[RMDB]
RNA sequence: GGGAACGACUCGAGUAGAGUCGAAAAGCACCAGCUGUCAACCACUUGAAGGUAGAGGGAUCAUUCUCUUCCAGACGUUUAGAGAUACGGCUGCUAAUCUUCUCGUAGUUGGUGAGGACACGGAGUGACUCAGGGUUCACUGUCUCAUCGUCUACCACCACGAAAGGUUAUUCGUAACCUUUCGUGGAAAAGAAACAACAACAACAAC
Reactivity to DMS in 0.01 (KOAc 150mM, MgCl2 10mM, bicine 150mM(pH8.5), 24C), signal-to-noise 1, nucleotides 027 to 156: g000c090a080c030c000a120g040c030u000g040u000c030a070a070c050c020a060c050u010u000g000a180a090g000g020u000a060g010a150g010g060g000a100u000c070a090u000u000c010u000c010u000u000c040c010a050g010a080c040g000u000u010u000a130g020a260g040a150u000a020c050g000g020c000u030g030c020u000a130a120u000c010u000u030c010u000c050g030u020a080g020u000u000g050g000u000g030a130g030g000a120c050a130c130g040g050a160g020u000g030a030c060u000c100a130g000g050g000u040u000c040a060c000u010g040u000c030u000c030a080u000c000g020u000c040u000a090c040c060a180
Reactivity to 2A3 in 0.01 (KOAc 150mM, MgCl2 10mM, bicine 150mM(pH8.5), 24C), signal-to-noise 5, nucleotides 027 to 156: g040c020a020c050c010a040g020c070u030g050u060c020a060a050c040c010a060c100u070u180g040a080a010g040g020u120a040g050a010g070g050g030a070u130c040a120u160u020c040u020c000u070u000c010c020a060g050a120c060g040u080u110u200a070g010a010g010a030u050a130c040g040g000c040u030g010c040u080a110a110u040c040u050u000c020u010c030g010u010a030g000u020u080g000g010u000g010a050g090g060a010c040a020c180g170g110a060g030u030g020a020c030u050c270a140g200g000g060u110u030c010a020c040u020g020u020c000u020c000a030u010c010g030u000c010u010a020c020c050a040
The data come from the RNA Mapping Database (RMDB), library OK3TST. This 207-nucleotide RNA was probed chemically with DMS and 2A3. For DMS, 2,179 sequencing reads were counted. For 2A3, 3,341 sequencing reads were counted. The reactions ran in a buffer of 150 mM KOAc, 10 mM MgCl2 and 150 mM bicine (pH 8.5), at 24 C. For 2A3 the reverse transcriptase was SuperScript II with manganese.